Source: RMDB library OK2TRN, as collected in RNAgym.
Chemical mapping of a 177-nucleotide RNA with DMS and 2A3.
The RNA was probed in 150 mM KOAc, 10 mM MgCl2 and 150 mM bicine (pH 8.5) at 24 C.
[RMDB]
RNA sequence: GGGAACGACUCGAGUAGAGUCGAAAAGUGCGGCGUCGCGGGAUUCACACUCGGCGAUACGUGUCGCCGUUUUGGCUGACCGGACCGGGCCAGGCUAUUGUGGUUGCCGAUCCACCGAAGACCGUCGAGACGUUAUACCGUUCGCGGUAUAACGUCUAAAAGAAACAACAACAACAAC
Reactivity to DMS in 0.01 (KOAc 150mM, MgCl2 10mM, bicine 150mM(pH8.5), 24C), signal-to-noise 2, nucleotides 027 to 126: g030u000g000c010g020g000c060g020u010c050g030c130g000g010g020a080u000u000c110a110c090a100c070u000c020g000g000c020g000a040u010a080c230g020u020g020u000c000g020c020c000g010u000u000u000u000g010g020c040u000g000a110c090c000g000g000a070c060c070g000g010g020c040c030a070g020g000c060u000a070u010u000g000u000g020g010u010u000g010c070c050g000a040u010c020c020a080c080c070g000a050a110g000a120c040c020g030u010c120g010
Reactivity to 2A3 in 0.01 (KOAc 150mM, MgCl2 10mM, bicine 150mM(pH8.5), 24C), signal-to-noise 2, nucleotides 027 to 126: g090u040g010c010g010g060c000g010u010c010g000c040g060g000g030a070u120u120c100a050c010a020c110u040c020g020g020c000g010a030u130a080c090g170u240g020u050c000g000c030c000g020u040u030u110u070g040g020c020u000g030a070c010c000g070g000a060c040c000g000g060g000c030c000a040g060g000c070u080a130u210u300g030u040g040g070u090u070g040c050c000g000a020u010c030c000a010c000c040g050a100a010g050a040c010c010g060u090c040g000